[RMDB]
RNA sequence: GGGAACGACUCGAGUAGAGUCGAAAAGGGGUCUAAAGUGCAACACUAUGAAGUUCGCGAAGAACGUACCUGAAGCCUCCACGGGUACGGGAGCGAACCAUAGUGGCUUUAGACGGAGGCACCCAAAGAUAGCUAGGAGUUCGCUCCUAGCUAUCAAACUUAGCGACUUGUUCGCAAGUCGCUAAGUAAAAGAAACAACAACAACAAC
Reactivity to 2A3 in 0.01 (KOAc 150mM, MgCl2 10mM, bicine 150mM(pH8.5), 24C), signal-to-noise 1, nucleotides 027 to 156: g050g000g020g010u010c000u000a010a000a010g040u110g090c190a300a050c000a100c010u000a020u020g040a250a090g010u000u000c000g000c010g050a070a030g000a020a000c000g000u000a000c000c000u040g040a130a030g020c000c010u000c000c000a000c000g000g000g000u030a000c000g000g000g010a010g000c000g010a000a000c000c000a010u010a000g010u000g010g020c000u000u010u000a010g000a000c050g010g000a000g000g070c010a040c000c020c020a100a140a010g010a000u010a000g010c000u000a000g000g010a020g000u030u120c250g120c060u000c000c000u000a000g000c010u000a000u000c000a000a000
This 207-nucleotide RNA was probed chemically with 2A3. The reactions ran in a buffer of 150 mM KOAc, 10 mM MgCl2 and 150 mM bicine (pH 8.5), at 24 C. The data come from the RNA Mapping Database (RMDB), library RNAMAK.